[RMDB]
RNA sequence: GGGAACGACUCGAGUAGAGUCGAAAAUGCUGGGUCUUACCACUCAGACUGUUGAUUCCUCACAGGGUUCAGAAUACCAGUACGUUAUCUUCUGUCAAACAGCAGAUACGGCACAUGCUAACAACAUUCAUUUAACAAACUUCGGUUUGUUAAAUGAAAAAGAAACAACAACAACAAC
Reactivity to DMS in 0.01 (KOAc 150mM, MgCl2 10mM, bicine 150mM(pH8.5), 24C), signal-to-noise 3, nucleotides 027 to 126: u000g000c030u000g000g000g010u000c020u000u040a150c250c230a050c020u010c020a050g010a120c060u000g010u000u010g000a210u000u000c020c010u000c150a140c160a120g000g010g010u000u000c070a100g010a090a070u000a140c080c030a060g050u000a040c030g000u010u000a020u000c000u000u000c000u000g000u010c260a130a060a300c030a000g020c050a000g020a030u000a010c030g000g000c110a030c110a060u000g060c110u000a020a050c040a040a140c150a060u000
Reactivity to 2A3 in 0.01 (KOAc 150mM, MgCl2 10mM, bicine 150mM(pH8.5), 24C), signal-to-noise 3, nucleotides 027 to 126: u090g020c010u020g000g000g030u030c060u060u070a040c010c040a020c030u020c010a030g010a240c040u070g100u110u110g070a160u080u040c010c000u040c010a040c030a040g100g020g030u100u070c030a040g050a170a050u080a180c020c010a020g070u070a030c020g040u130u070a020u000c010u010u010c000u020g090u140c040a110a170a150c010a110g000c000a000g010a010u020a010c020g000g040c030a010c010a120u180g050c030u080a080a030c000a010a010c000a020u000